An RNA of 177 nucleotides, treated with DMS and 2A3 and read out base by base. 2A3 adducts were read by reverse transcription with SuperScript II with manganese. Values cover nucleotides 27 to 126. The 2A3 profile rests on 4,549 reads. Conditions: 150 mM KOAc, 10 mM MgCl2 and 150 mM bicine (pH 8.5), 24 C. For DMS, 2,924 sequencing reads were counted. The data come from the RNA Mapping Database (RMDB), library M2PK90.
[RMDB]
RNA sequence: GGGAACGACUCGAGUAGAGUCGAAAAUUAACUAGCGUAGGGAACCAAGCAAAGAGGUAAGAAAUCCCACGGUAGAAGGCUUGGUUCGCGCCGGUGGAAGAAGAAGUCCCACUCCCUACGCCACAAAGCACCUAUAAAGAUUCGUCUUUAUAGGUGCAAAAGAAACAACAACAACAAC
Reactivity to DMS in 0.01 (KOAc 150mM, MgCl2 10mM, bicine 150mM(pH8.5), 24C), signal-to-noise 3, nucleotides 027 to 126: u000u010a120a130c100u010a080g000c000g010u000a020g010g000g010a030a060c020c010a030a030g010c030a090a100a100g010a090g000g010u000a090a060g000a050a110a120u000c010c000c020a110c080g000g010u010a060g000a090a070g000g000c010u000u000g000g010u000u000c050g020c140g020c050c040g000g010u000g010g010a050a070g000a080a060g010a120a080g010u000c030c010c000a180c050u000c000c000c000u000a040c010g020c000c120a040c150a070a070a090
Reactivity to 2A3 in 0.01 (KOAc 150mM, MgCl2 10mM, bicine 150mM(pH8.5), 24C), signal-to-noise 2, nucleotides 027 to 126: u090u030a050a040c070u010a000g000c000g010u000a010g000g010g010a010a010c010c010a000a010g010c040a060a090a130g170a120g090g000u130a150a050g080a120a120a040u040c020c010c020a010c020g040g030u080a120g040a160a020g040g000c020u010u010g020g010u040u030c060g000c020g000c040c020g030g000u040g030g020a080a070g050a100a010g060a050a010g140u060c020c000c000a000c020u010c000c000c000u000a010c000g000c000c010a040c020a000a080a020